[RMDB]
Structure probing data (2A3) for a 177-nucleotide construct. 2A3 adducts were read by reverse transcription with SuperScript II with manganese. The 2A3 profile rests on 597 reads. Source: RMDB library OK1LIB, as collected in RNAgym.
RNA sequence: GGGAACGACUCGAGUAGAGUCGAAAAUGUCCGAGCGACGCGACUCCUGCGCGGUGCCUCUCUUCGUUCGAAUCGCUCGACGACAGGCUGUCCACCACAUACGUUUCCGUCGUCCUUCUGGAGUCACGGACUCCCGCUGCUUCGGCAGCGGGAGUCCAAAAGAAACAACAACAACAAC
Reactivity to 2A3 in 0.01 (KOAc 150mM, MgCl2 10mM, bicine 150mM(pH8.5), 24C), signal-to-noise 1, nucleotides 027 to 126: u160g020u020c000c000g000a040g000c020g020a050c070g000c000g040a020c050u000c000c000u060g000c090g010c040g010g050u070g070c010c000u090c000u010c060u110u090c040g080u000u150c010g050a070a080u130c090g030c100u000c000g010a010c030g040a030c040a010g050g020c000u010g080u100c030c000a080c000c010a030c020a060u250a050c020g000u050u050u000c040c010g030u010c000g030u000c010c040u150u170c120u170g040g020a010g020u000c010a070c210